[RMDB]
The data come from the RNA Mapping Database (RMDB), library OK1LIB.
Chemical mapping of a 177-nucleotide RNA with 2A3.
The reactions ran in a buffer of 150 mM KOAc, 10 mM MgCl2 and 150 mM bicine (pH 8.5), at 24 C.
RNA sequence: GGGAACGACUCGAGUAGAGUCGAAAACUCGGCGACGUUCUCGGUCGAGUAGGCGUCGGUGACGACGGUCCGGUCCGUGCCGUACUCACCUGCGAGGACGCCACACACCUCGUGGUCGUCGCCGUCGGACGUCCCCGCUAUUCGUAGCGGGGACGUCAAAAGAAACAACAACAACAAC
Reactivity to 2A3 in 0.01 (KOAc 150mM, MgCl2 10mM, bicine 150mM(pH8.5), 24C), signal-to-noise 2, nucleotides 027 to 126: c020u000c000g020g010c000g010a010c000g110u200u010c170u120c090g000g000u050c140g010a070g040u040a100g000g000c010g000u000c010g000g000u020g000a010c100g000a020c020g000g010u010c030c000g060g160u100c010c010g000u040g020c030c040g100u160a280c000u000c000a000c020c010u140g050c060g060a090g110g080a000c010g000c050c010a030c010a000c000a000c040c000u030c110g030u010g000g000u020c000g000u000c000g000c000c020g000u010c000g010
The 2A3 profile rests on 782 reads.
2A3 adducts were read by reverse transcription with SuperScript II with manganese.